[RMDB]
Source: RMDB library OK1LIB, as collected in RNAgym.
An RNA of 177 nucleotides, treated with 2A3 and DMS and read out base by base.
Reactivities are given for positions 27 through 126.
RNA sequence: GGGAACGACUCGAGUAGAGUCGAAAACAUGCAUAUGCUCUUUAACUUCCGGAAGUGCAAGCAAAAUAAACCAUUCUUCAGGGAAAUCGUACCUUGCUAUUAAUGUAGCAGGUUUUGCCUUUGAAGCCAGCGUAUGAGUGUUCGCACUCAUACGCUGAAAAGAAACAACAACAACAAC
Reactivity to 2A3 in 0.01 (KOAc 150mM, MgCl2 10mM, bicine 150mM(pH8.5), 24C), signal-to-noise 5, nucleotides 027 to 126: c040a030u080g000c010a060u150a110u180g000c000u010c010u050u030u030a170a120c040u300u070c110c090g080g050a020a000g010u020g050c020a000a060g010c000a050a020a090a100u220a040a110a050c050c030a080u110u050c000u000u020c020a000g000g040g030a040a090a030u060c080g060u130a040c000c030u110u210g000c000u030a030u100u160a230a150u300g030u020a010g000c000a000g000g000u000u000u020u040g020c020c000u150u170u120g010a020a000g040c050
Reactivity to DMS in 0.01 (KOAc 150mM, MgCl2 10mM, bicine 150mM(pH8.5), 24C), signal-to-noise 1, nucleotides 027 to 126: c100a070u110g000c140a110u020a280u000g000c000u000c030u000u040u030a130a100c040u000u000c080c110g000g000a020a030g000u000g000c020a020a000g020c100a050a010a150a030u000a060a160a200c000c000a120u000u000c000u000u000c000a060g000g030g000a000a010a030u060c200g000u040a010c000c000u020u030g030c000u100a000u050u060a100a050u060g000u060a000g050c000a000g000g010u000u000u000u020g010c020c000u110u000u000g010a000a060g000c300
2A3 is a SHAPE reagent: it acylates the 2'-hydroxyl of flexible nucleotides of all four kinds.
Values are in units of 0.01, from 0 to 300, in steps of 10.
For DMS, 1,199 sequencing reads were counted.
The 2A3 profile rests on 2,533 reads.
The reactions ran in a buffer of 150 mM KOAc, 10 mM MgCl2 and 150 mM bicine (pH 8.5), at 24 C.